This 207-nucleotide RNA was probed chemically with 2A3. The reactions ran in a buffer of 150 mM KOAc, 10 mM MgCl2 and 150 mM bicine (pH 8.5), at 24 C. 2A3 adducts were read by reverse transcription with SuperScript II with manganese. Reactivities are rounded to 0.1 and cut off at 0 and 3.
[RMDB]
RNA sequence: GGGAACGACUCGAGUAGAGUCGAAAAACUAACACAGGAACAGAAAACCAAACACCACAUAUUCUCACUCAUAAGUGGGAGUUGAACAAUGAGAACACAUGGACACAGGGAAUGUCACACACUGGGGCCUGUCAGGGGGUGGAGGGGAAAGGGGAGAGUGGAGUAUAGGAUUCGUCCUAUACUCCACAAAAGAAACAACAACAACAAC
Reactivity to 2A3 in 0.01 (KOAc 150mM, MgCl2 10mM, bicine 150mM(pH8.5), 24C), signal-to-noise 1, nucleotides 027 to 156: a010c060u110a140a010c070a060c030a050g000g000a000a040c090a030g160a000a080a000a030c040c140a030a160a000c020a010c020c070a120c080a010u160a040u140u010c000u000c010a030c000u020c060a300u070a210a120g000u000g000g070g000a000g000u030u070g030a050a030c040a040a050u170g010a000g010a120a050c060a000c000a210u110g090g010a160c090a030c080a160g150g050g000a110a030u100g010u040c010a010c000a000c000a000c070u010g000g000g000g000c000c000u140g110u260c080a010g000g000g010g000g000u070g030g010a120g000g000g010g040a020a030a030g060g000g000g000a030g030a000